[RMDB]
RNA sequence: GGGAACGACUCGAGUAGAGUCGAAAAUGGUACUAUGAGUCAUGGACUAUAGAGACUAGCAUGCAUGGCUAGGAUCCACUAGUAGUACUACAUCUAGUGAUCCAUGGGAUCGUACACACAUGGUACGCCCUCCAGCGAACUUCGGUUCGCUGGAGGGAAAAGAAACAACAACAACAAC
Reactivity to DMS in 0.01 (KOAc 150mM, MgCl2 10mM, bicine 150mM(pH8.5), 24C), signal-to-noise 1, nucleotides 027 to 126: u010g020g040u000a000c010u020a010u010g010a060g000u000c020a010u000g000g000a070c060u000a140u000a120g000a120g000a160c010u000a000g040c010a150u040g000c250a050u000g010g010c000u000a080g000g000a070u000c000c060a050c050u000a080g000u030a120g000u000a110c200u010a120c120a100u000c000u000a000g000u010g000a200u010c000c000a030u000g000g000g000a100u000c090g000u010a040c120a100c090a110c120a120u000g010g000u020a000c030g020
Reactivity to 2A3 in 0.01 (KOAc 150mM, MgCl2 10mM, bicine 150mM(pH8.5), 24C), signal-to-noise 1, nucleotides 027 to 126: u050g020g020u020a040c020u010a010u100g030a000g050u040c000a030u010g020g020a010c060u100a090u060a300g030a030g030a050c010u020a010g000c000a040u190g060c040a110u170g140g000c010u000a010g030g030a000u000c010c000a020c000u030a000g010u030a020g080u060a200c070u070a040c060a030u110c000u010a020g000u000g010a020u000c000c020a040u020g010g000g060a100u100c090g100u180a030c070a000c000a000c000a000u040g000g000u000a010c010g030